The record gives the reactivity of an RNA of 177 nucleotides to 2A3.
As a SHAPE reagent, 2A3 marks flexible, mostly unpaired nucleotides at the ribose 2'-OH.
Values cover nucleotides 27 to 126.
The data come from the RNA Mapping Database (RMDB), library OK1LIB.
[RMDB]
RNA sequence: GGGAACGACUCGAGUAGAGUCGAAAAGAAAGAAAUCACUAAUCGGAUCAAAGCGGAUUGAUCUACGAAUAACUCGUAGUGAGUGAUCCAAAUGUAACUGAGCAAUGAGUUAUCCGUAUUAGAGAAAGGGUUUGUUUGAGUUCGCUCAAACAAACCCAAAAGAAACAACAACAACAAC
Reactivity to 2A3 in 0.01 (KOAc 150mM, MgCl2 10mM, bicine 150mM(pH8.5), 24C), signal-to-noise 1, nucleotides 027 to 126: g160a000a250a010g040a030a070a000u070c010a000c210u000a010a010u010c000g000g030a000u000c010a070a020a000g220c000g000g000a000u000u040g030a040u000c000u000a000c000g050a000a000u170a160a030c080u030c030g000u000a000g010u010g110a080g070u250g000a000u000c000c000a000a050a000u190g000u050a050a010c010u050g180a000g060c050a020a090u210g060a000g220u080u000a000u100c010c010g140u080a000u020u030a000g030a000g060a080a000a000